[RMDB]
RNA sequence: GGGAACGACUCGAGUAGAGUCGAAAACGCUGGGUCGAACUACACUGAGGUGGAGGGAGCUGAAGCGCGCACGGCUUUGAUCUCCACGCAGGUGCGACCUGUGCUGAAGCGCGCACGGCAACCGAAAGGUGCGAAAGAGUGGAAUUCGUUCCACUAAGGACCUAGUUAAGUUCGCUUAACUAGGUCCAAAAGAAACAACAACAACAAC
Reactivity to 2A3 in 0.01 (KOAc 150mM, MgCl2 10mM, bicine 150mM(pH8.5), 24C), signal-to-noise 2, nucleotides 027 to 156: c090g010c030u090g000g000g000u000c010g060a150a100c090u220a030c260a020c060u050g090a100g080g070u000g000g010a000g000g020g040a010g040c000u010g010a090a040g010c000g000c010g000c000a030c040g000g000c000u250u130u090g030a030u020c000u000c000c000a000c040g010c020a020g000g060u010g020c000g000a000c000c000u010g020u100g030c070u120g030a020a050g000c000g000c000g000c020a010c060g050g020c050a160a090c020c010g070a090a030a070g000g010u010g000c060g100a150a040a080g160a070g000u000g000g050a000a000u050u040c100g070u160u000c020c000a000c000u000a060a140